Chemical mapping of a 177-nucleotide RNA with DMS and 2A3.
Values cover nucleotides 27 to 126.
Conditions: 150 mM KOAc, 10 mM MgCl2 and 150 mM bicine (pH 8.5), 24 C.
RNA sequence: GGGAACGACUCGAGUAGAGUCGAAAAAGGAGAUAGGUAAGGUGGUCGGGAGCGGCAAGAGGCUCUAUCUGGAUUAUAAUGCCAGUGCGCCUUUGCUUGAUGAAGCGCGCGAUGCGAUCAUCGCGGACUAUACUCGUGCCUUCGGGCACGAGUAUAGAAAAGAAACAACAACAACAAC
Reactivity to DMS in 0.01 (KOAc 150mM, MgCl2 10mM, bicine 150mM(pH8.5), 24C), signal-to-noise 2, nucleotides 027 to 126: a100g020g000a090g010a070u010a040g010g010u020a050a090g000g020u000g000g020u000c040g000g010g010a130g010c090g010g000c100a060a040g010a060g000g000c020u000c080u010a060u000c010u010g010g000a040u010u020a090u020a100a110u030g000c010c000a010g010u010g010c300g000c000c000u000u000u000g010c020u000u000g010a100u010g020a060a050g000c110g000c010g000c000g010a000u000g010c190g000a200u000c030a010u000c000g020c040g010g000a170
Reactivity to 2A3 in 0.01 (KOAc 150mM, MgCl2 10mM, bicine 150mM(pH8.5), 24C), signal-to-noise 2, nucleotides 027 to 126: a020g080g000a050g000a060u140a080g080g080u140a130a030g010g020u040g020g020u060c040g030g050g010a040g020c060g010g000c020a060a020g050a030g270g000c020u000c020u040a050u040c000u010g010g000a020u070u110a170u240a300a220u300g000c020c010a000g010u000g000c000g000c000c000u000u010u030g020c000u060u030g050a110u170g050a060a040g110c090g020c010g000c020g130a050u050g020c070g070a040u190c010a000u020c010g020c020g010g020a020
It was measured as part of the RMDB library OK2TST.